[RMDB]
Structure probing data (DMS) for a 177-nucleotide construct.
It was measured as part of the RMDB libraries RFM100 and RFMREP.
RNA sequence: GGGAACGACUCGAGUAGAGUCGAAAAGAUGGGGAACAUAGUAUACCAGGGCGAGAGAUGAAAUGCCAAGACCCCUGGUGGACUGAGCGAGGCGAAGGCGAUGUUCUUGUAGGCAUUCGGUGAUCAAAUAACAGGCCUAUUUCGAUAGGCCUGUUAUAAAAGAAACAACAACAACAAC
Reactivity to DMS in 0.01 (KOAc 150mM, MgCl2 10mM, bicine 150mM(pH8.5), 24C), signal-to-noise 6, nucleotides 027 to 126: g000a080u030g000g010g000g010a100a070c080a070u040a030g010u010a090u040a030c010c020a020g000g010g020c060g000a180g000a100g020a060u020g000a080a100a060u040g010c070c020a090a070g010a270c300c000c000c010u010g010g010u010g000g020a070c030u010g010a120g000c050g010a050g000g020c060g000a070a060g010g000c050g000a060u010g000u000u000c050u010u010g010u010a040g000g000c030a030u010u010c060g010g000u000g010a080u010c090a060a050
Reactivities are rounded to 0.1 and cut off at 0 and 3.